RNA sequence: GGGAACGACUCGAGUAGAGUCGAAAACUGCGGUCGGCGAACUCAACGAAACCGUAUAUCCAAUUUUGGGUAUUGGUGGAGUUUCCACAGAUGCGCACUCUCAGAUAUUCUCCGCACUGUGCGCACAACUAGCUGCAGUAUUCGUACUGCAGCUAGUAAAAGAAACAACAACAACAAC
Reactivity to 2A3 in 0.01 (KOAc 150mM, MgCl2 10mM, bicine 150mM(pH8.5), 24C), signal-to-noise 9, nucleotides 027 to 126: c040u060g020c010g050g050u100c050g050g020c060g030a050a030c020u030c090a060a110c100g080a120a040a010c010c010g040u040a000u000a000u020c010c010a110a160u190u180u290u140g000g000g000u010a010u010u030g000g000u020g020g010a030g000u010u020u030c030c020a080c020a050g100a120u060g010c010g000c010a000c000u020c010u020c040a000g040a080u090a130u180u090c080u020c010c010g030c020a070c080u060g010u010g010c010g000c000a010c000a030
Reactivity to DMS in 0.01 (KOAc 150mM, MgCl2 10mM, bicine 150mM(pH8.5), 24C), signal-to-noise 4, nucleotides 027 to 126: c050u020g000c120g010g020u010c020g010g000c100g020a120a020c030u000c060a120a130c160g030a250a130a030c010c000g000u010a020u000a010u000c000c000a050a240u040u010u030u020g010g000g060u000a010u010u000g000g010u030g000g010a230g030u010u010u010c040c040a070c190a090g030a120u000g000c000g010c000a010c010u010c040u010c070a070g020a140u020a130u050u020c020u000c010c050g040c040a100c080u040g010u000g000c000g000c000a040c110a150
Description:
Chemical mapping of a 177-nucleotide RNA with 2A3 and DMS. For 2A3, 12,448 sequencing reads were counted. The RNA was probed in 150 mM KOAc, 10 mM MgCl2 and 150 mM bicine (pH 8.5) at 24 C. The data come from the RNA Mapping Database (RMDB), library OK1LIB.